This 177-nucleotide RNA was probed chemically with DMS and 2A3. Source: RMDB library OK1LIB, as collected in RNAgym.
[RMDB]
RNA sequence: GGGAACGACUCGAGUAGAGUCGAAAACUUUCCAAAAGCCAUUUGAUCCGAUGGGGAGAUAGGAAGAAGUUAGAGCAGAUGAAGGAAAGGUCUGGCCUAGUGGAGAACUGGCAAGAGCAGACUGAUGCACAAUACGUCCGUUCGCGGACGUAUUGUGAAAAGAAACAACAACAACAAC
Reactivity to DMS in 0.01 (KOAc 150mM, MgCl2 10mM, bicine 150mM(pH8.5), 24C), signal-to-noise 2, nucleotides 027 to 126: c200u000u000u000c010c020a100a060a110a140g010c030c030a120u000u040u030g000a130u000c070c040g040a040u010g000g000g010g000a100g000a080u010a090g000g000a100a060g000a090a060g000u000u030a050g010a130g010c070a090g010a070u010g020a090a090g000g020a070a110a110g000g010u000c080u020g000g010c010c050u000a010g000u000g000g010a110g000a060a070c070u010g020g020c060a040a110g030a130g010c030a090g000a010c050u000g000a120u000g010
Reactivity to 2A3 in 0.01 (KOAc 150mM, MgCl2 10mM, bicine 150mM(pH8.5), 24C), signal-to-noise 4, nucleotides 027 to 126: c000u020u050u040c030c000a000a180a060a000g100c030c050a170u090u040u150g130a120u140c040c050g060a080u070g040g000g050g000a040g030a020u090a060g040g020a000a080g000a040a000g080u110u180a040g010a020g070c050a000g000a090u070g060a090a030g070g040a070a040a000g100g000u000c010u050g050g020c000c010u040a010g000u030g020g110a270g050a090a050c030u010g030g000c010a040a000g080a030g100c010a000g030a060c030u080g060a060u130g010
Values cover nucleotides 27 to 126.